RNA sequence: GGGAACGACUCGAGUAGAGUCGAAAAAAACUAUGUUUUCAUCGUAGUACCAUGAUAUGUUGAAAAUAUCCGGCAUUCUUCCUCUCAUCAAAGAUAUUCGAGGAUUGUCAAGUGGGGGCCAUCAGCGAGAUUGAUGUCUAUUCGUAGACAUCAAUCUAAAAGAAACAACAACAACAAC
Reactivity to DMS in 0.01 (KOAc 150mM, MgCl2 10mM, bicine 150mM(pH8.5), 24C), signal-to-noise 4, nucleotides 027 to 126: a070a060a050c050u000a040u000g010u000u000u000u010c090a050u000c010g030u000a030g010u010a190c050c050a060u010g010a070u000a020u010g010u000u000g010a070a020a030a040u010a040u000c080c100g010g000c030a030u000u000c060u000u000c010c030u010c060u000c090a060u010c150a090a070a090g010a070u010a080u010u010c150g000a040g000g000a050u010u000g020u000c050a070a070g020u000g010g000g010g010g010c070c030a030u000c060a050g010c140g010
Reactivity to 2A3 in 0.01 (KOAc 150mM, MgCl2 10mM, bicine 150mM(pH8.5), 24C), signal-to-noise 1, nucleotides 027 to 126: a010a000a000c100u090a070u150g000u050u030u070u110c060a080u050c010g000u010a010g030u040a040c040c010a040u060g040a010u050a010u060g040u080u050g040a060a110a000a010u050a020u020c060c080g010g010c040a020u030u050c000u030u010c000c000u040c020u030c040a130u000c030a050a190a000g050a040u040a080u070u130c060g010a030g000g040a000u050u020g020u030c040a030a040g080u060g040g030g000g020g000c000c060a090u090c060a000g080c010g020